An RNA of 177 nucleotides, treated with DMS and read out base by base. For DMS the reverse transcriptase was MarathonRT. The RNA was probed in 150 mM KOAc, 10 mM MgCl2 and 150 mM bicine (pH 8.5) at 24 C.
RNA sequence: GGGAACGACUCGAGUAGAGUCGAAAACGCGGGUCGUCGUAGUUGAAGGCUCCGCGAUCAUCCAGAAAGCCCGGCUCCUCCAUAAGAUCGCGGAUAUCCUCGUCCGCCCGAUAUGCCAGCGCCGGUGCCAUUGGGAGGACUUCGGUCCUCCCAAUGGAAAAGAAACAACAACAACAAC
Reactivity to DMS in 0.01 (KOAc 150mM, MgCl2 10mM, bicine 150mM(pH8.5), 24C), signal-to-noise 1, nucleotides 027 to 126: c030g010c020g000g000g000u010c080g010u000c000g000u010a100g010u000u020g000a060a050g030g010c120u040c020c030g010c000g020a030u000c100a120u010c030c000a090g010a110a140a180g000c050c020c040g020g000c000u010c090c040u000c200c030a070u010a030a060g010a090u000c150g010c040g000g000a040u020a070u000c090c100u020c080g010u000c010c040g020c010c110c000g010a200u010a110u030g010c080c060a030g030c300g030c000c030g000g020u030g000

It was measured as part of the RMDB library OK2TST.